Chemical mapping of a 177-nucleotide RNA with DMS and 2A3. 2A3 adducts were read by reverse transcription with SuperScript II with manganese.
[RMDB]
RNA sequence: GGGAACGACUCGAGUAGAGUCGAAAAGCUAUACGCGGCCGGCAUAUAUCGUAAUUACGCGCGGCAUCGUAGCGCGCUAAUAUCGCGUAUAGCCGGCAUAUCGAUUAUAGCCGUAGCCGGCUAUACGCACAAAGGGGUAAUUCGUUACCCCUUUGUGAAAAGAAACAACAACAACAAC
Reactivity to DMS in 0.01 (KOAc 150mM, MgCl2 10mM, bicine 150mM(pH8.5), 24C), signal-to-noise 9, nucleotides 027 to 126: g010c020u000a080u000a040c080g010c100g000g010c020c010g010g010c020a060u000a050u000a070u010c240g010u010a120a100u010u000a040c110g010c010g020c000g010g010c030a040u000c110g010u000a050g010c110g010c060g010c110u000a050a070u010a100u010c130g010c010g010u000a000u000a010g010c000c000g010g000c000a060u000a040u010c030g010a090u000u010a120u010a140g010c100c020g010u000a060g010c020c000g000g000c000u000a000u000a000c020g020
Reactivity to 2A3 in 0.01 (KOAc 150mM, MgCl2 10mM, bicine 150mM(pH8.5), 24C), signal-to-noise 9, nucleotides 027 to 126: g000c010u030a020u010a160c040g010c040g050g010c020c000g030g000c070a030u120a010u030a030u170c110g120u130a180a120u110u080a050c050g040c010g000c010g060g010c030a050u080c040g060u050a020g050c020g000c010g000c050u030a090a060u080a090u240c070g000c000g010u000a000u000a010g000c000c000g010g000c010a060u060a020u170c010g020a020u070u100a100u290a200g090c040c010g010u010a010g010c000c000g000g000c000u000a000u000a000c000g000
About this RNA
High 2A3 reactivity points to a flexible backbone, as in loops and unpaired stretches.